[RMDB]
RNA sequence: GGGAACGACUCGAGUAGAGUCGAAAACAAACACAAUAGAUACCCACUAAAUGAAAUUAUGCUCAAUAAACUUUACAAGUGGUAUCAAAGUUAUUUCGAAAAUUUCAUUCACAGAGGUAUGGGUUAGAAGAACGUAUCUAUUCGUAGAUACGUUCUUAAAAGAAACAACAACAACAAC
Reactivity to DMS in 0.01 (KOAc 150mM, MgCl2 10mM, bicine 150mM(pH8.5), 24C), signal-to-noise 5, nucleotides 027 to 126: c050a120a100a080c130a100c150a090a130u010a120g010a100u000a020c010c010c010a030c020u000a110a010a010u000g000a020a010a010u000u000a040u000g020c110u000c080a050a020u000a040a050a040c010u000u000u000a070c110a120a140g010u010g010g020u000a080u000c140a030a020a020g010u000u000a030u000u000u010c070g000a030a040a020a020u000u000u000c000a020u000u000c020a020c300a010g000a100g000g000u000a000u000g000g000g010u000u010a080g000
Reactivity to 2A3 in 0.01 (KOAc 150mM, MgCl2 10mM, bicine 150mM(pH8.5), 24C), signal-to-noise 4, nucleotides 027 to 126: c000a010a090a000c080a010c020a110a170u120a080g130a010u010a030c000c020c000a000c020u030a000a020a020u000g000a020a000a000u050u030a070u300g030c000u010c020a010a030u070a110a170a070c050u050u060u090a050c060a190a180g130u090g140g080u230a110u230c030a000a000a010g010u000u010a020u050u090u100c050g020a150a010a000a050u010u030u000c000a000u030u020c060a090c050a140g030a020g050g000u040a010u030g100g050g020u090u100a090g080